[RMDB]
RNA sequence: GGGAACGACUCGAGUAGAGUCGAAAACGUAGGAGUAUACUGGACUACACGCUCUGGUGCCAAGACGUAUGGUGACAUCGUUAUAAAAUCUUUUGCCUAGACUCGUUCUAGAGCAGAUAAGACAACCGAAUAAGAGCUAGUUCGCUAGCUCUUAUUCAAAAGAAACAACAACAACAAC
Reactivity to 2A3 in 0.01 (KOAc 150mM, MgCl2 10mM, bicine 150mM(pH8.5), 24C), signal-to-noise 9, nucleotides 027 to 126: c070g020u060a040g000g100a040g060u080a040u040a190c060u080g020g050a020c020u060a030c090a010c050g010c020u010c010u030g020g030u040g020c010c010a040a030g090a050c050g100u130a070u090g020g020u030g020a020c010a050u190c080g030u070u060a120u090a120a100a030a050u030c020u010u060u050u010g000c000c000u000a000g000a010c010u040c210g140u290u000c040u010a010g010a020g010c000a000g020a070u130a040a010g020a020c050a050a030c090c070
Reactivity to DMS in 0.01 (KOAc 150mM, MgCl2 10mM, bicine 150mM(pH8.5), 24C), signal-to-noise 9, nucleotides 027 to 126: c090g010u010a080g000g010a090g010u010a060u010a090c060u010g010g000a090c050u010a080c080a080c100g000c050u000c020u000g010g010u000g020c040c040a090a100g020a070c080g010u020a050u000g000g010u020g000a100c070a050u000c050g010u000u010a110u030a050a070a090a140u010c040u000u000u010u000g000c010c000u000a000g000a010c020u040c300g010u020u000c010u000a010g000a120g010c010a010g000a030u010a030a030g000a040c170a080a100c180c110
Structure probing data (2A3 and DMS) for a 177-nucleotide construct.
The reactions ran in a buffer of 150 mM KOAc, 10 mM MgCl2 and 150 mM bicine (pH 8.5), at 24 C.
For 2A3 the reverse transcriptase was SuperScript II with manganese.